[RMDB]
RNA sequence: GGGAACGACUCGAGUAGAGUCGAAAAGAAACGCAAGGCCGCUGACCGACGGGAUAUUGUGGGGCUUACCACAGGGGACGCGGCGUUAUCACUUGCCUUUUAAGCCGACCGUCUAGGCUGCAUACAAACCACCCAACUAUCUUCGGAUAGUUGGGAAGAUAAUGCAAACGUUCGCGUUUGCAUUAUCAAAAGAAACAACAACAACAAC
Reactivity to DMS in 0.01 (KOAc 150mM, MgCl2 10mM, bicine 150mM(pH8.5), 24C), signal-to-noise 2, nucleotides 027 to 156: g050a090a060a080c050g030c010a050a100g000g020c010c030g020c000u000g010a260c030c000g000a240c030g020g000g040a170u000a130u020u000g020u000g020g010g010g070c230u010u000a100c030c050a040c040a100g000g030g030g030a300c160g000c040g050g020c020g030u000u000a060u000c140a230c020u000u000g040c000c040u000u000u000u020a040a130g030c010c030g030a120c010c020g040u000c050u000a160g020g070c010u010g000c060a110u000a100c130a070a090a060c000c060a140c010c000c010a010a030c000u010a010u000c010u000u020c300g050g020a020u000a000g020u000u000g000g000g000a000a030
Reactivity to 2A3 in 0.01 (KOAc 150mM, MgCl2 10mM, bicine 150mM(pH8.5), 24C), signal-to-noise 3, nucleotides 027 to 156: g020a020a070a010c070g000c010a000a020g120g000c010c000g010c040u060g100a070c000c030g000a010c020g030g040g110a150u130a110u300u100g000u030g000g010g020g140c130u100u150a080c010c000a010c010a020g000g000g020g060a010c030g000c040g000g030c010g010u050u020a040u030c030a030c120u000u020g000c010c030u040u200u030u130a040a010g000c000c000g040a050c020c000g000u010c040u060a020g000g020c000u020g000c010a060u100a110c090a040a050a040c040c010a020c000c020c000a000a000c000u000a000u000c000u040u070c130g090g010a000u000a000g000u000u000g000g020g000a000a000
The record gives the reactivity of an RNA of 207 nucleotides to DMS and 2A3. The 2A3 profile rests on 2,740 reads. Source: RMDB library M2RFPK, as collected in RNAgym. The RNA was probed in 150 mM KOAc, 10 mM MgCl2 and 150 mM bicine (pH 8.5) at 24 C.